[RMDB]
RNA sequence: GGGAACGACUCGAGUAGAGUCGAAAACCUUCCUUCUUCGGUGAUCCCGUCUCUCCUGUUCGGUGAACCCUCCCGGGUGUUUCCUCUUCCUAGGUCCGGAGUCGACCUCCAUCUGAUCCGUCCUGGCGAUUGUAUGAUACUUCGGUAUCAUACAAUCAAAAGAAACAACAACAACAAC
Reactivity to 2A3 in 0.01 (KOAc 150mM, MgCl2 10mM, bicine 150mM(pH8.5), 24C), signal-to-noise 2, nucleotides 027 to 126: c010c000u040u040c010c010u050u090c020u030u090c050g050g030u040g050a070u040c010c000c020g040u000c010u020c000u020c020c010u020g060u080u100c030g060g060u050g080a100a060c000c020c000u030c030c010c000g010g040g000u030g010u000u050u020c000c000u020c010u070u010c010c010u020a030g030g030u000c040c030g040g010a000g020u020c020g020a050c000c010u000c010c020a080u030c040u070g020a040u020c030c020g050u040c030c020u010g020g010c040
Reactivity to DMS in 0.01 (KOAc 150mM, MgCl2 10mM, bicine 150mM(pH8.5), 24C), signal-to-noise 3, nucleotides 027 to 126: c030c030u000u010c030c020u000u010c040u000u000c080g010g020u000g000a090u010c040c020c020g010u010c060u000c030u000c020c030u000g000u000u000c060g030g010u000g010a090a130c060c020c020u000c040c040c060g010g020g020u000g010u000u000u000c030c010u000c050u000u000c010c020u000a080g010g010u000c030c060g010g000a080g010u000c040g000a090c060c010u010c020c030a080u000c070u000g010a090u010c040c040g010u000c050c020u000g000g000c270